[RMDB]
RNA sequence: GGGAACGACUCGAGUAGAGUCGAAAAGGUUGAUGGUUCGCCAUCAACCAAAAGCGCUCGUAGCUCAAUUGGAUAGAGCAUCUGACUACGGAUCAGAAGGUUAGGGGUUCGAAUCCUCUCGAGCGCGCCAAAAUACAUGAAGGUUCGCCUUCAUGUAGACUCAACGUUACUUCGGUAACGUUGAGUCAAAAGAAACAACAACAACAAC
Reactivity to 2A3 in 0.01 (KOAc 150mM, MgCl2 10mM, bicine 150mM(pH8.5), 24C), signal-to-noise 3, nucleotides 027 to 156: g000g000u000u000g000a000u010g000g080u050u070c230g070c040c000a000u000c000a000a000c000c000a010a020a010a000g000c000g000c000u000c000g000u000a000g010c010u000c000a060a070u180u260g060g050a100u050a100g000a000g000c000a000u000c000u010g010a000c010u130a140c250g100g090a190u000c000a010g010a020a000g010g000u030u000a000g000g010g030g000u000u000c000g000a010a000u000c000c000u010c000u010c000g010a000g000c010g010c000g010c000c000a050a030a000a010u060a000c000a010u010g000a000a000g050g000u040u140c210g080c060c000u000u000c000a000u000g000u000a010